Record summary: This 177-nucleotide RNA was probed chemically with 2A3 and DMS. For 2A3, 7,462 sequencing reads were counted.
RNA sequence: GGGAACGACUCGAGUAGAGUCGAAAAGGGGGUGUAACAUGCGGAGAGGAAAUGCGACAUGCAUGUAAAUAUAUGAGAACAUUCCAUCACCAAGACACUCCUCACUUGAUAUGGGGACGGGAAGUAGCCACCAUAGAGUAUUCGUACUCUAUGGUGGAAAAGAAACAACAACAACAAC
Reactivity to 2A3 in 0.01 (KOAc 150mM, MgCl2 10mM, bicine 150mM(pH8.5), 24C), signal-to-noise 4, nucleotides 027 to 126: g040g010g000g010g000u020g010u030a040a030c020a040u080g030c060g040g040a050g000a020g120g070a090a080a040u110g030c040g030a040c070a050u150g010c010a010u040g030u140a010a130a000u170a010u040a020u070g070a070g010a150a000c010a030u040u000c000c000a080u050c040a030c030c000a030a010g050a010c040a020c040u010c010c000u010c010a060c040u050u170g040a030u050a070u300g010g000g000g050a010c040g050g000g000a060a070g080u120a040g050
Reactivity to DMS in 0.01 (KOAc 150mM, MgCl2 10mM, bicine 150mM(pH8.5), 24C), signal-to-noise 7, nucleotides 027 to 126: g000g000g010g010g030u000g010u000a080a080c100a070u010g010c170g010g040a140g010a100g010g000a030a060a060u010g010c040g000a290c100a070u010g010c070a010u000g010u000a060a090a090u010a080u000a050u010g000a100g000a160a090c030a030u000u010c010c010a080u000c030a090c030c020a060a090g000a080c080a050c060u000c000c010u000c040a050c090u000u000g010a090u010a090u000g010g000g010g000a050c120g000g000g000a050a100g010u000a120g020

The DMS profile rests on 8,027 reads. The reactions ran in a buffer of 150 mM KOAc, 10 mM MgCl2 and 150 mM bicine (pH 8.5), at 24 C.